[RMDB]
RNA sequence: GGGAACGACUCGAGUAGAGUCGAAAACUGGGAUUACAGGCGUGAACACCGCGCCCGACCUUGAUUUUUGAUUAUUUGUGGAAACAGCGUUUCUCUGUGUCGUCCAGGUUGGUCUUGAACUCCUGGGCUCAAGCGACCCUCCCGCCUCAACCUCCCAAUAUUUUACUGGAUUCGUCCAGUAAAAUAUAAAAGAAACAACAACAACAAC
Reactivity to 2A3 in 0.01 (KOAc 150mM, MgCl2 10mM, bicine 150mM(pH8.5), 24C), signal-to-noise 5, nucleotides 027 to 156: c010u020g020g000g030a060u090u210a120c050a040g000g000c010g030u010g070a190a040c100a070c200c040g010c010g010c000c010c010g050a070c000c020u040u030g070a210u080u080u100u070u080g070a060u030u180a080u140u140u130g080u090g040g040a080a060a030c030a030g080c030g060u000u090u010c040u010c020u030g060u030g040u100c050g010u000c010c000a000g020g040u130u130g070g000u080c030u070u210g050a080a040c010u020c030c010u010g000g020g000c000u010c020a050a020g020c030g040a070c000c000c010u010c000c010c010g030c000c000u040c020a030a020c000c020u010c010c010c000a000
Reactivity to DMS in 0.01 (KOAc 150mM, MgCl2 10mM, bicine 150mM(pH8.5), 24C), signal-to-noise 2, nucleotides 027 to 156: c040u000g010g010g020a070u010u010a120c100a020g020g000c020g040u020g010a080a180c140a160c110c020g060c030g020c020c000c010g000a050c000c030u020u030g010a070u000u000u000u000u010g020a120u000u000a100u000u000u020g000u010g010g010a130a090a100c050a090g000c120g020u010u000u000c010u000c030u000g010u000g010u000c050g000u010c030c020a110g010g000u010u000g010g010u010c050u000u010g000a050a050c020u010c030c020u000g020g010g020c010u010c040a060a090g010c040g020a090c030c010c010u000c010c020c000g000c050c030u000c040a070a100c010c030u010c010c000c000a130
Chemical mapping of a 207-nucleotide RNA with 2A3 and DMS. For DMS the reverse transcriptase was MarathonRT. For 2A3 the reverse transcriptase was SuperScript II with manganese. Conditions: 150 mM KOAc, 10 mM MgCl2 and 150 mM bicine (pH 8.5), 24 C. Reactivities are given for positions 27 through 156.